This 177-nucleotide RNA was probed chemically with 2A3 and DMS. It was measured as part of the RMDB library M2PK50. The reactions ran in a buffer of 150 mM KOAc, 10 mM MgCl2 and 150 mM bicine (pH 8.5), at 24 C.
[RMDB]
RNA sequence: GGGAACGACUCGAGUAGAGUCGAAAAAUCCUGGCAUUCGUGCCAGGAUGUUUACCGAGAAAGUCCCUCGGUAUAAAAGCGCAACCCUUGGAAACAAGGGAAUAAUCGCAGUGUUCGCACUGCGAAACGUAUCUCUCCUUUUCGAAGGAGAGAUACGAAAAGAAACAACAACAACAAC
Reactivity to 2A3 in 0.01 (KOAc 150mM, MgCl2 10mM, bicine 150mM(pH8.5), 24C), signal-to-noise 3, nucleotides 027 to 126: a000u000c000c000u010g010g000c010a020u000u040c170g110u070g000c010c000a000g000g000a000u000g000u000u020u010a000c000c000g010a000g030a040a160a020g240u070c000c010c000u000c010g000g020u010a010u040a010a060a000a000g130c120g010c080a080a090c000c000c000u000u000g000g020a040a020a000c010a000a010g000g000g030a000a020u050a000a020u030c000g000c000a000g000u010g060u050u100c210g050c060a000c010u020g000c000g000a010a010a000
Reactivity to DMS in 0.01 (KOAc 150mM, MgCl2 10mM, bicine 150mM(pH8.5), 24C), signal-to-noise 4, nucleotides 027 to 126: a030u000c000c000u000g000g020c000a030u000u010c200g010u000g000c010c000a010g000g000a000u000g000u010u000u000a010c000c010g010a030g010a110a100a130g000u010c020c040c000u010c000g000g010u000a000u000a050a060a110a120g010c260g010c230a100a120c000c000c000u000u000g000g000a200a090a140c000a010a000g010g000g010a050a010u000a100a080u000c000g000c000a020g010u000g010u000u010c130g040c000a010c010u000g000c000g000a000a010a080
For 2A3, 5,983 sequencing reads were counted.